[RMDB]
This 177-nucleotide RNA was probed chemically with DMS and 2A3. Source: RMDB libraries RFM100 and RFMREP, as collected in RNAgym. DMS (dimethyl sulfate) methylates the pairing face of unpaired adenines and cytosines. The reactions ran in a buffer of 150 mM KOAc, 10 mM MgCl2 and 150 mM bicine (pH 8.5), at 24 C.

RNA sequence: GGGAACGACUCGAGUAGAGUCGAAAAAAUAAGACGCAGGACUAUCAGUUAGUUGGUAGUGUAAUGGACUACCAAGACAGUGACGGUUGACGGGAAAUUAGGGUUUUGUACCGGAGAGGGAGCCUGAUUUUCGAUAGUGUUUCGACACUAUCGAAAAAAAAGAAACAACAACAACAAC
Reactivity to DMS in 0.01 (KOAc 150mM, MgCl2 10mM, bicine 150mM(pH8.5), 24C), signal-to-noise 4, nucleotides 027 to 126: a050a080u010a050a030g000a070c070g050c070a030g000g030a050c010u020a070u020c070a060g010u000u030a120g010u000u000g010g000u000a000g000u000g000u000a110a100u050g010g000a050c010u000a020c000c000a020a010g000a050c060a070g010u010g000a020c110g010g000u000u000g000a120c110g000g000g000a040a060a080u010u010a090g010g000g010u000u020u000u020g030u020a100c050c050g030g010a120g010a120g000g010g000a070g010c070c010u000g000a150
Reactivity to 2A3 in 0.01 (KOAc 150mM, MgCl2 10mM, bicine 150mM(pH8.5), 24C), signal-to-noise 2, nucleotides 027 to 126: a000a000u270a050a040g040a000c030g010c030a030g030g090a070c050u040a060u120c040a050g040u060u140a010g020u030u020g000g030u000a000g000u000g030u060a080a030u080g060g000a000c000u000a000c000c000a010a000g010a000c000a090g090u070g060a020c000g040g070u000u060g050a040c030g000g030g000a070a060a040u060u060a050g030g020g010u010u030u110u080g110u090a130c000c020g020g000a050g050a040g050g010g030a000g020c000c010u030g030a060